[RMDB]
RNA sequence: GGGAACGACUCGAGUAGAGUCGAAAACUCUGGAGGCUGAGUUGGGAGGAUCGCUUGAGCCCAGGAGUUUGAGGCUACAUUGAGCUGUGAUUGCACCACUGCACUCUAGCCUGGGCGACAGAGACAGCACAGUCUGUGGUUUCGACCACAGACUGUGAAAAGAAACAACAACAACAAC
Reactivity to DMS in 0.01 (KOAc 150mM, MgCl2 10mM, bicine 150mM(pH8.5), 24C), signal-to-noise 2, nucleotides 027 to 126: c020u000c020u000g000g000a140g010g020c070u000g020a040g010u010u020g000g010g000a050g000g000a080u010c070g000c060u000u000g000a300g010c020c010c020a050g050g010a050g010u000u000u000g000a070g000g000c020u000a070c110a120u010u020g000a080g030c000u000g020u000g010a070u020u000g020c030a160c090c030a050c120u000g020c090a050c030u000c030u000a010g000c010c000u020g000g020g010c030g010a120c110a050g010a100g010a040c210a070g010
Reactivity to 2A3 in 0.01 (KOAc 150mM, MgCl2 10mM, bicine 150mM(pH8.5), 24C), signal-to-noise 1, nucleotides 027 to 126: c020u050c070u080g000g050a020g080g000c010u010g070a020g120u090u030g030g030g020a020g000g020a060u010c030g000c020u000u040g060a010g000c000c010c010a010g000g020a130g060u100u030u040g020a000g010g030c040u130a020c110a150u070u140g050a070g050c020u020g030u050g070a130u150u220g000c020a060c100c060a050c060u070g010c050a070c050u000c000u000a050g020c030c010u000g000g000g000c020g000a020c030a050g080a000g000a000c040a020g090